[RMDB]
RNA sequence: GGGAACGACUCGAGUAGAGUCGAAAAGAGCUUAAUGCGAUGCACUAUUAAUUGCUGUUGUGCAGUUUAUGAUCGCAUGCUUACUUAAGGGAUCAUAAACUCUAAUCUAAUCUUAGAGAGCCCCUUAGAUAGUAUUGUGAUUCGUUACGGUGCUAUCAAAAGAAACAACAACAACAAC
Reactivity to 2A3 in 0.01 (KOAc 150mM, MgCl2 10mM, bicine 150mM(pH8.5), 24C), signal-to-noise 9, nucleotides 027 to 126: g050a000g010c050u130u200a100a020u110g010c010g020a020u070g080c050a030c090u120a060u170u120a060a050u080u050g020c030u050g070u300u100g060u150g030c010a010g000u020u040u040a100u090g030a010u000c000g000c020a010u020g010c010u050u040a060c000u040u050a020a020g030g000g020a030u120c030a110u240a130a130a080c010u000c000u010a000a020u030c050u100a060a040u040c030u030u020a010g000a000g010a020g040c000c000c000c000u000u000a020
Reactivity to DMS in 0.01 (KOAc 150mM, MgCl2 10mM, bicine 150mM(pH8.5), 24C), signal-to-noise 9, nucleotides 027 to 126: g010a100g010c030u020u020a100a040u010g010c040g000a050u010g010c050a080c140u020a090u030u020a040a060u010u010g010c020u010g010u020u020g010u010g010c020a020g010u010u000u010a050u020g000a020u000c000g020c000a020u000g010c020u010u010a110c060u020u010a020a010g000g000g000a090u020c130a120u030a090a100a130c010u000c010u000a020a020u020c140u030a100a090u050c300u010u000a010g000a020g000a170g000c140c000c000c000u000u000a020
An RNA of 177 nucleotides, treated with 2A3 and DMS and read out base by base.
It was measured as part of the RMDB library OK1LIB.
2A3 adducts were read by reverse transcription with SuperScript II with manganese.